[RMDB]
RNA sequence: GGGAACGACUCGAGUAGAGUCGAAAAUCGUGACCUCUAGUUUAUCGGUUGUCCGACAGGGCAGUUGCCGAGUAGCCACGUCAUACGCGAAUAAAAGCUGAAAGCAUCUAAGCUUGAAGUCGCCCCUCUUGAUCGCUAGAUUCGUCUAGCGAUCAAGAAAAGAAACAACAACAACAAC
Reactivity to 2A3 in 0.01 (KOAc 150mM, MgCl2 10mM, bicine 150mM(pH8.5), 24C), signal-to-noise 5, nucleotides 027 to 126: u120c050g020u020g010a010c000c020u000c000u010a020g010u030u050u060a070u020c020g030g050u240u010g010u000c010c030g050a160c110a250g000g030g000c040a060g010u220u210g020c000c000g000a000g000u000a000g010c010c000a040c090g000u000c010a010u030a060c060g000c000g000a020a000u040a010a060a000a000g000c020u010g050a080a070a040g100c040a080u050c090u140a060a000g020c000u000u020g010a140a010g010u010c000g000c000c000c000c010u000
Reactivity to DMS in 0.01 (KOAc 150mM, MgCl2 10mM, bicine 150mM(pH8.5), 24C), signal-to-noise 2, nucleotides 027 to 126: u000c120g010u030g010a050c000c000u000c010u000a010g000u000u000u000a210u000c000g000g060u000u000g030u000c010c000g010a070c300a180g020g010g020c010a010g000u030u090g020c000c010g000a040g000u010a070g000c000c010a010c020g010u000c010a040u000a120c280g010c020g000a060a010u000a110a140a020a030g010c010u050g000a160a150a170g030c210a010u040c010u000a090a090g000c000u020u000g000a080a100g000u000c000g000c000c000c000c000u000